[RMDB]
RNA sequence: GGGAACGACUCGAGUAGAGUCGAAAACUGUCAGACCUCAUGUCUCGCAUCUGGAUGACAUACCGGAGGGGGUUCCCUCCAAUAUGCGGCUCUGGCAUCACCAGCGAUGUUGGGUGGGGUUGCACGCUAGAGCAACCUUCUUCGGAAGGUUGCUCUAAAAAGAAACAACAACAACAAC
Reactivity to 2A3 in 0.01 (KOAc 150mM, MgCl2 10mM, bicine 150mM(pH8.5), 24C), signal-to-noise 2, nucleotides 027 to 126: c040u030g030u040c000a010g020a100c000c010u030c010a020u060g080u000c010u000c100g030c010a150u110c040u110g060g060a090u080g020a050c010a000u120a040c030c090g000g030a000g000g000g020g090g090u240u300c000c000c010u050c010c020a040a030u180a070u130g030c020g000g000c020u020c000u020g030g030c010a010u040c010a020c040c030a000g020c030g090a060u060g020u180u110g030g010g080u040g030g000g000g000u030u040g010c190a070c060g080c070
Reactivity to DMS in 0.01 (KOAc 150mM, MgCl2 10mM, bicine 150mM(pH8.5), 24C), signal-to-noise 3, nucleotides 027 to 126: c140u000g000u000c070a110g010a090c020c000u000c050a040u000g010u010c040u000c140g030c090a060u010c100u010g050g000a170u000g010a070c040a050u010a080c140c090g010g020a040g010g000g010g010g010u020u020c010c000c000u000c010c020a030a030u000a070u010g010c080g000g000c110u000c040u000g000g010c020a070u000c040a130c020c030a070g010c110g010a060u000g000u000u000g010g020g000u010g000g000g010g000u000u000g010c100a050c110g000c150
The record gives the reactivity of an RNA of 177 nucleotides to 2A3 and DMS. The DMS profile rests on 3,616 reads. It was measured as part of the RMDB library OK2TRN. As a SHAPE reagent, 2A3 marks flexible, mostly unpaired nucleotides at the ribose 2'-OH.